Conditions: 150 mM KOAc, 10 mM MgCl2 and 150 mM bicine (pH 8.5), 24 C. An RNA of 207 nucleotides, treated with DMS and 2A3 and read out base by base. Reactivities are given for positions 27 through 156. Source: RMDB library OK3TST, as collected in RNAgym. The 2A3 profile rests on 2,654 reads.

RNA sequence: GGGAACGACUCGAGUAGAGUCGAAAAUGUAAGGCCAUGUACACAUAUCUAAGAAUUGGUGAGUAUGUCAAUAAUUGCUCAAUUUUAUAACGGUGCCAUAAUCCCAUACUAUUACACUCCAUCCAUUCAACAAAUAUUACCAAGUGCUUACUACAGGAAGUUCAUUAGUCUUCGGACUAAUGAACUUAAAAGAAACAACAACAACAAC
Reactivity to DMS in 0.01 (KOAc 150mM, MgCl2 10mM, bicine 150mM(pH8.5), 24C), signal-to-noise 2, nucleotides 027 to 156: u000g000u000a000a090g000g050c010c050a130u000g030u000a090c080a130c050a090u000a060u000c040u000a110a240g010a080a090u000u000g030g060u020g000a090g020u000a080u010g010u010c060a080a120u000a050a090u000u000g010c030u010c050a040a070u010u010u010u000a090u010a120a130c060g000g030u000g000c020c070a090u000a100a150u000c010c010c000a210u000a080c030u010a060u000u000a070c050a040c020u000c020c000a100u010c040c040a100u000u000c020a030a130c060a090a060a040u000a060u000u000a060c050c050a070a080g000u000g040c010u000u000a050c030u000a090c040a110g020g000
Reactivity to 2A3 in 0.01 (KOAc 150mM, MgCl2 10mM, bicine 150mM(pH8.5), 24C), signal-to-noise 5, nucleotides 027 to 156: u160g020u030a030a040g040g020c020c010a040u050g050u120a040c050a000c020a070u070a020u070c070u130a160a030g050a120a080u080u050g050g010u060g040a040g030u070a040u140g050u060c050a080a040u090a160a070u120u050g010c010u020c080a090a100u040u090u080u070a210u050a140a070c040g030g020u060g070c030c010a030u090a090a080u100c000c010c030a010u050a030c010u040a060u120u050a040c020a020c040u000c010c000a010u000c020c010a040u080u080c020a050a020c010a040a120a030u150a050u090u050a040c030c010a060a040g040u020g070c030u070u050a040c040u060a030c010a010g240g000